[RMDB]
RNA sequence: GGGAACGACUCGAGUAGAGUCGAAAACCACCGCAAUUCGUUGCGGUGGGAAGGUGCAAUUCGCUGUCUGCACCACAGACGGCCAAUCGGUCAAAGCGAAAACUGGAGGGUCAUUCGUGACCCUCAAAGAACACCGGAAAUUCGUUUCCGGUGUUCUAAAAGAAACAACAACAACAAC
Reactivity to 2A3 in 0.01 (KOAc 150mM, MgCl2 10mM, bicine 150mM(pH8.5), 24C), signal-to-noise 3, nucleotides 027 to 126: c020c000a000c000c000g000c000a030a040u080u060c170g070u150u010g000c000g000g000u000g000g000g000a050a060g040g030u110g020c020a080a120u010u030c000g000c010u020g040u060c010u020g060c010a040c080c000a010c010a000g080a000c010g020g040c020c000a120a300u250c140g050g020u050c040a170a050a030g020c000g010a040a000a010a060c090u120g070g000a020g030g010g010u010c020a020u070u020c090g060u030g000a000c030c030c000u010c000a010a000
Reactivity to DMS in 0.01 (KOAc 150mM, MgCl2 10mM, bicine 150mM(pH8.5), 24C), signal-to-noise 2, nucleotides 027 to 126: c000c000a000c000c000g040c000a000a000u000u000c190g010u000u000g010c000g010g070u000g000g000g000a050a020g010g000u000g010c110a090a080u000u000c070g010c000u000g000u010c020u000g000c040a210c080c070a150c040a040g000a030c020g020g000c010c010a040a120u010c150g030g010u000c020a030a060a080g000c020g020a080a040a080a110c140u000g000g000a000g000g000g000u010c000a060u000u010c120g040u000g000a020c000c000c000u020c010a000a020